[RMDB]
RNA sequence: GGGAACGACUCGAGUAGAGUCGAAAACCACAUCCCUGCAUAGACAGGGCCACUGACAGGCAGUGGCAGCCAGUUCAGUGGCACUCAGCCAGGUCUCCAGGGGUGUGCGCUUUGCUCUGGGGGCAGGCGUACAGGACGAGUUCGCUCGUCCUGUACGAAAAGAAACAACAACAACAAC
Reactivity to 2A3 in 0.01 (KOAc 150mM, MgCl2 10mM, bicine 150mM(pH8.5), 24C), signal-to-noise 2, nucleotides 027 to 126: c010c010a010c000a020u040c000c000c000u010g000c080a190u150a260g040a020c010a040g000g030g010c000c010a000c000u010g010a030c010a090g020g030c000a050g060u100g170g150c030a010g000c010c000a020g040u150u090c010a000g000u000g000g000c000a020c010u170c000a030g050c040c020a110g040g050u000c010u000c020c010a010g000g010g000g000u010g000u010g020c040g000c040u170u140u170g040c000u030c090u090g070g010g000g000g030c010a010g020g030
Reactivity to DMS in 0.01 (KOAc 150mM, MgCl2 10mM, bicine 150mM(pH8.5), 24C), signal-to-noise 3, nucleotides 027 to 126: c050c010a090c060a050u000c010c000c000u000g010c270a120u010a140g010a030c050a050g000g020g010c000c000a010c000u000g000a030c040a210g000g020c020a090g050u000g000g000c100a140g020c010c000a120g020u020u010c010a020g000u000g000g000c030a050c100u020c120a110g010c090c050a120g010g010u000c000u010c210c010a020g000g000g030g010u000g010u000g000c060g020c060u000u000u000g020c060u020c040u000g000g020g000g030g040c140a030g010g000